[RMDB]
Chemical mapping of a 177-nucleotide RNA with DMS and 2A3.

RNA sequence: GGGAACGACUCGAGUAGAGUCGAAAACUCAUUCGACAAACAUAUAUUGAUCACUUUUGUGCAGGUGCUACAAGAACUCACAGAUCAGUGGGCCUAGUAUUUUUGUAGCCAUUGCAGGGCCCAGAACGCCGAAUGAAUGAUUCGUCAUUCAUUCGGCAAAAGAAACAACAACAACAAC
Reactivity to DMS in 0.01 (KOAc 150mM, MgCl2 10mM, bicine 150mM(pH8.5), 24C), signal-to-noise 1, nucleotides 027 to 126: c020u000c040a120u020u020c180g020a060c100a020a000a120c160a080u000a060u030a120u000u020g010a030u000c050a060c160u000u000u000u020g000u010g040c020a080g000g010u030g030c020u000a010c020a010a010g030a020a150c050u020c020a040c030a150g000a120u020c170a150g020u000g000g020g000c170c020u000a120g020u000a000u000u000u000u000u000g010u000a010g010c010c040a040u030u000g010c080a190g020g000g010c030c000c050a140g020a070a110c240
Reactivity to 2A3 in 0.01 (KOAc 150mM, MgCl2 10mM, bicine 150mM(pH8.5), 24C), signal-to-noise 2, nucleotides 027 to 126: c010u000c020a080u210u200c090g110a020c070a000a190a040c050a060u110a010u040a100u160u100g050a090u050c010a040c120u040u090u160u240g060u050g000c020a050g060g040u060g070c000u010a040c030a000a030g010a120a030c010u040c090a060c040a050g160a240u150c020a020g100u020g000g000g030c020c010u080a080g060u070a260u000u080u010u000u000g000u000a000g000c010c040a040u000u020g000c010a030g000g000g060c000c020c030a000g050a060a050c070
Conditions: 150 mM KOAc, 10 mM MgCl2 and 150 mM bicine (pH 8.5), 24 C. For DMS the reverse transcriptase was MarathonRT.